[RMDB]
RNA sequence: GGGAACGACUCGAGUAGAGUCGAAAAUUCAGCGCAUUCGUGCGCUGAAAAGCUGUACAACGCAUGUACAGAAAACAAAACAAAAACAAAACAAAAUGCGUAGCAGGGUUCUUUUCGAAGAACCCAAAUUCGUUGUCUUAUUCGUAAGACAACGAAUAAAAGAAACAACAACAACAAC
Reactivity to 2A3 in 0.01 (KOAc 150mM, MgCl2 10mM, bicine 150mM(pH8.5), 24C), signal-to-noise 2, nucleotides 027 to 126: u000u010c000a010g000c010g000c000a000u030u050c160g100u050g030c010g000c010u000g000a000a000a000a000g000c010u000g000u000a010c030a060a020c120g000c020a000u020g000u000a000c000a000g070a050a080a010a020c060a000a080a000a010c040a030a140a050a000a010c050a020a110a020a030c020a010a210a030a030u020g000c010g020u020a020g110c150a080g000g000g010u000u000c000u000u070u050u130c180g090a010a000g010a000a010c010c000c000a000a010
Reactivity to DMS in 0.01 (KOAc 150mM, MgCl2 10mM, bicine 150mM(pH8.5), 24C), signal-to-noise 2, nucleotides 027 to 126: u010u000c010a000g020c000g070c000a050u000u010c240g020u000g000c010g030c010u000g000a000a020a110a120g010c010u000g000u000a000c000a080a060c010g010c030a020u000g010u000a000c000a000g000a000a060a130a110c180a070a030a080a090c150a060a080a070a080a090c080a090a060a060a070c180a060a080a100a030u000g000c010g000u000a170g040c220a080g000g000g000u000u000c000u000u010u000u000c160g000a000a020g010a000a010c000c000c000a010a030